[RMDB]
RNA sequence: GGGAACGACUCGAGUAGAGUCGAAAAGAUAUGGAGAUCCCACAGAGCGAAGAACUCGGAAACGAGGGAGCUCGAUGGGAGUCUCCUAAGUCAAAGCUAUCGCUACCCUUCGGGGUAGCGAUAGCAAUCAUGGACAUAAGUUCGCUUAUGUCCAUGAAAAAGAAACAACAACAACAAC
Reactivity to DMS in 0.01 (KOAc 150mM, MgCl2 10mM, bicine 150mM(pH8.5), 24C), signal-to-noise 3, nucleotides 027 to 126: g000a030u010a300u000g010g000a020g010a270u000c010c010c000a050c220a250g010a000g020c000g010a110a130g000a120a200c000u000c010g010g010a140a090a250c000g000a010g000g000g010a090g030c000u000c000g010a170u000g000g000g000a050g000u010c010u000c000c000u000a000a140g010u000c040a080a070a130g010c000u010a000u000c000g010c000u010a000c010c000c000u000u000c210g040g010g010g020u000a000g000c020g000a000u000a000g000c000a020a020
Reactivity to 2A3 in 0.01 (KOAc 150mM, MgCl2 10mM, bicine 150mM(pH8.5), 24C), signal-to-noise 1, nucleotides 027 to 126: g010a010u120a050u110g010g000a000g000a020u010c000c000c030a000c030a010g020a010g000c010g090a300a030g000a060a110c000u000c000g000g060a080a120a030c010g020a020g000g020g030a030g000c010u000c030g000a020u020g010g030g020a080g120u070c010u000c020c000u000a160a010g020u010c040a180a010a010g000c010u000a000u010c010g030c000u000a000c000c020c070u020u070c240g050g010g000g000u000a000g040c010g010a000u000a000g000c010a010a010